RNA sequence: GGGAACGACUCGAGUAGAGUCGAAAAACGCGCUAAUGAUAAUAUCUUAUCAGUUAGAUUCACUGCUAACAAAAUUGUUGGUGGUGCUCCUACAUGGUUUAAUGCGUUGCGUGACUUUACGUUAAAGAAGGCCUUCACUUCGGUGAAGGCAAAAGAAACAACAACAACAAC
Reactivity to DMS in 0.01 (KOAc 150mM, MgCl2 10mM, bicine 150mM(pH8.5), 24C), signal-to-noise 3, nucleotides 027 to 129: a020c050g070c040g000c000u010a060a020u010g010a000u030a040a090u040a300u040c140u000u010a000u010c040a020g030u010u010a000g030a070u000u000c000a020c020u030g000c010u060a000a040c030a030a130a080a110u080u020g020u000u030g010g030u010g000g040u020g000c290u010c010c000u060a000c000a090u070g010g020u090u120u030a080a050u030g020c080g000u000u000g010c120g000u000g000a100c050u020u030u040a010c000g050u000u000a000a130a060g020a040a110g050
Reactivity to 2A3 in 0.01 (KOAc 150mM, MgCl2 10mM, bicine 150mM(pH8.5), 24C), signal-to-noise 5, nucleotides 027 to 129: a000c000g030c000g000c020u050a070a000u070g060a070u020a060a020u110a180u160c180u130u110a030u080c020a060g080u040u030a010g000a050u090u070c000a000c000u000g000c000u000a000a010c000a010a100a190a250u300u120g000u000u000g000g010u010g000g020u000g040c010u050c000c020u020a060c070a130u130g010g080u020u030u220a040a010u100g010c060g010u020u070g030c020g060u030g020a040c030u050u050u080a060c010g060u020u070a050a010a000g060a030a030g120